[RMDB]
RNA sequence: GGGAACGACUCGAGUAGAGUCGAAAAUCGCCUUUCUCCACCUCGCAACGCGCUUCGGUUCUGGCUCAUAUACCGAAAACCUCAGGGGAUGCCAAAUAUGCAAGCGAUACCUCAGCAAAUAUAAGGCUGCAACCUAAAUAUUCGUAUUUAGGUUGCAAAAAGAAACAACAACAACAAC
Reactivity to 2A3 in 0.01 (KOAc 150mM, MgCl2 10mM, bicine 150mM(pH8.5), 24C), signal-to-noise 7, nucleotides 027 to 126: u050c030g060c010c000u020u070u030c030u010c020c010a060c010c010u030c030g030c030a030a130c030g030c000g010c060u040u020c020g040g000u060u040c030u070g090g010c020u040c070a080u130a020u050a160c020c000g050a050a040a050a060c010c020u080c040a030g010g030g000g030a040u090g030c000c010a030a090a050u210a050u130g030c050a030a050g010c010g030a020u070a100c010c020u040c020a030g010c040a050a140a010u180a050u040a080a050g100g000c010
Reactivity to DMS in 0.01 (KOAc 150mM, MgCl2 10mM, bicine 150mM(pH8.5), 24C), signal-to-noise 4, nucleotides 027 to 126: u010c060g000c020c020u010u000u010c030u010c000c010a110c030c020u030c100g000c060a070a060c100g000c070g000c070u000u010c010g010g000u000u000c050u010g030g000c050u000c090a080u000a140u030a100c060c050g000a080a020a070a130c070c020u010c060a070g000g000g000g010a120u030g000c040c040a020a100a110u030a090u040g030c080a100a040g000c040g020a050u010a080c050c000u020c030a060g020c100a040a050a050u020a070u030a060a130g000g020c110
An RNA of 177 nucleotides, treated with 2A3 and DMS and read out base by base. For DMS the reverse transcriptase was MarathonRT. The RNA was probed in 150 mM KOAc, 10 mM MgCl2 and 150 mM bicine (pH 8.5) at 24 C.